[RMDB]
The record gives the reactivity of an RNA of 177 nucleotides to 2A3 and DMS. Conditions: 150 mM KOAc, 10 mM MgCl2 and 150 mM bicine (pH 8.5), 24 C. The DMS profile rests on 6,813 reads. 2A3 adducts were read by reverse transcription with SuperScript II with manganese.
RNA sequence: GGGAACGACUCGAGUAGAGUCGAAAAGUGGUAGUCAAGCAUCUUCUCUGCCAUCUAGAAGGAAUACUGUAUCACAGAAUGACUUGCUUGCAACUCUUCAACAGCAUCAGCAACAACAAGCAGCAUAUCAAAAUGGGUAUUUCGAUACCCAUUUUGAAAAAGAAACAACAACAACAAC
Reactivity to 2A3 in 0.01 (KOAc 150mM, MgCl2 10mM, bicine 150mM(pH8.5), 24C), signal-to-noise 4, nucleotides 027 to 126: g050u050g050g010u060a040g030u060c020a030a020g030c010a060u030c040u080u000c020u000c030u050g050c010c020a070u050c030u030a050g060a090a020g080g060a080a040u060a160c030u040g050u110a070u150c050a020c010a060g100a090a040u070g010a090c020u030u080g000c010u020u030g020c020a050a080c030u040c020u120u090c030a070a050c000a040g020c000a040u050c020a030g000c030a010a050c010a020a030c010a070a000g030c000a000g000c020a040u060a020
Reactivity to DMS in 0.01 (KOAc 150mM, MgCl2 10mM, bicine 150mM(pH8.5), 24C), signal-to-noise 6, nucleotides 027 to 126: g020u000g000g020u000a030g010u010c050a050a080g020c100a050u000c040u000u000c040u010c030u000g010c050c050a040u010c060u000a070g010a090a070g010g000a120a060u010a080c040u000g000u010a070u010c090a060c050a050g010a080a050u010g010a070c080u000u000g020c030u000u000g010c070a080a110c080u000c040u000u000c060a070a060c100a060g010c030a030u000c040a030g010c040a030a050c080a050a050c060a040a030g010c060a050g000c090a060u000a100